The record gives the reactivity of an RNA of 177 nucleotides to DMS and 2A3. It was measured as part of the RMDB library OK1LIB. 2A3 adducts were read by reverse transcription with SuperScript II with manganese. Reactivities are rounded to 0.1 and cut off at 0 and 3. The RNA was probed in 150 mM KOAc, 10 mM MgCl2 and 150 mM bicine (pH 8.5) at 24 C. DMS adducts were read by reverse transcription with MarathonRT. Reactivities are given for positions 27 through 126.
RNA sequence: GGGAACGACUCGAGUAGAGUCGAAAAGUUCGGCGAAAGGGCGUCUGCCUGGGUCCGAAAGAUUUCUUGUCGCAAAUCUAAAAGACAUUGGUUAACGUAUGCUCCAGUUUAAGGGCCGCUCGCCGGGUCAAGGGAUGGUCUUCGGGCCGUUCCUUGAAAAAGAAACAACAACAACAAC
Reactivity to DMS in 0.01 (KOAc 150mM, MgCl2 10mM, bicine 150mM(pH8.5), 24C), signal-to-noise 9, nucleotides 027 to 126: g010u020u010c010g010g010c000g000a030a170a100g010g000g000c010g010u020c090u010g010c070c000u000g010g010g010u000c000c010g000a090a110a030g000a020u000u000u000c040u020u030g010u030c200g020c200a030a020a020u000c030u000a040a080a170a100g000a020c030a060u010u010g000g010u000u010a080a060c110g010u010a090u030g010c050u020c010c030a100g010u020u020u020a110a100g000g000g000c010c030g000c120u000c010g010c000c000g000g010g000
Reactivity to 2A3 in 0.01 (KOAc 150mM, MgCl2 10mM, bicine 150mM(pH8.5), 24C), signal-to-noise 8, nucleotides 027 to 126: g040u040u040c000g000g000c000g020a100a030a030g080g010g000c010g060u050c060u080g000c000c000u010g010g020g020u000c010c010g030a050a040a000g000a000u020u020u000c010u030u160g170u110c100g010c110a020a010a030u000c010u060a070a050a000a000g020a010c010a030u030u050g020g010u050u120a050a020c030g030u070a070u130g010c010u010c020c010a010g000u000u050u100a040a030g010g010g000c000c000g020c000u010c000g000c000c000g000g000g000